[RMDB]
RNA sequence: GGGAACGACUCGAGUAGAGUCGAAAAGACGACGCCGAUCACGACGCUGUCGCGGCCGAUAUCGGUGAGGAGUAUCCCGAGUACGACGUUCGGACCAGCGACAGCCAGGUACAGUCGAUGCUCGGGGAACGCACGGCCGUCCUCGCAAGCGGCGCGAAUUCGAUGUGAGUUUCGACUCACAUCGAAUAAAAGAAACAACAACAACAAC
Reactivity to 2A3 in 0.01 (KOAc 150mM, MgCl2 10mM, bicine 150mM(pH8.5), 24C), signal-to-noise 2, nucleotides 027 to 156: g100a010c090g000a030c020g010c010c000g020a100u140c080a020c040g100a020c050g000c110u040g060u190c080g000c070g070g000c080c000g030a040u050a060u140c050g000g010u100g010a140g100g030a080g020u130a070u090c000c000c000g020a000g010u100a020c020g000a000c020g070u070u120c090g000g110a230c030c020a000g020c030g120a170c050a010g000c030c000a060g000g040u070a030c000a000g000u000c000g020a160u020g010c000u000c000g000g060g010g020a070a020c050g040c040a010c030g030g000c000c020g040u000c010c020u040c000g040c020a060a050g030c010g020g000c000g000c030g050a070